[RMDB]
RNA sequence: GGGAACGACUCGAGUAGAGUCGAAAAACUAGGAGCGGACAUCUCUCUAAGACUGUACGACAGUCUGUCUCUCUAGCACGCUUGUUCAACGAGAGAGAGAGAGCGUUGGAACAAGUGUGCAACGAAAUACACCUCAAUUCUUCGGAAUUGAGGUGUAAAAAGAAACAACAACAACAAC
Reactivity to DMS in 0.01 (KOAc 150mM, MgCl2 10mM, bicine 150mM(pH8.5), 24C), signal-to-noise 2, nucleotides 027 to 126: a060c100u010a030g000g000a020g050c110g010g020a090c040a120u010c020u020c040u000c030u010a150a060g010a060c030u000g000u000a100c090g030a290c290a020g010u000c000u020g000u000c030u000c000u000c040u020a180g010c050a020c000g000c000u020u000g000u000u010c010a020a020c010g000a080g000a130g000a140g010a060g000a050g020a070g000c020g000u020u000g000g020a000a020c010a000a030g010u000g030u000g000c000a030a040c180g000a050a080a110
Reactivity to 2A3 in 0.01 (KOAc 150mM, MgCl2 10mM, bicine 150mM(pH8.5), 24C), signal-to-noise 3, nucleotides 027 to 126: a000c100u120a080g050g030a020g030c090g030g060a040c050a150u050c040u000c000u000c020u040a040a010g010a010c010u030g070u160a080c130g080a040c100a010g000u000c020u020g030u000c060u000c000u020c020u030a040g000c000a000c000g010c010u000u000g000u020u010c000a010a000c010g000a010g000a010g000a010g010a000g000a010g010a150g040c020g000u020u050g140g010a020a000c000a000a000g020u010g020u000g010c000a010a000c030g040a040a040a010
The record gives the reactivity of an RNA of 177 nucleotides to DMS and 2A3.
DMS adducts were read by reverse transcription with MarathonRT.
For 2A3, 4,635 sequencing reads were counted.
For DMS, 1,591 sequencing reads were counted.
Values cover nucleotides 27 to 126.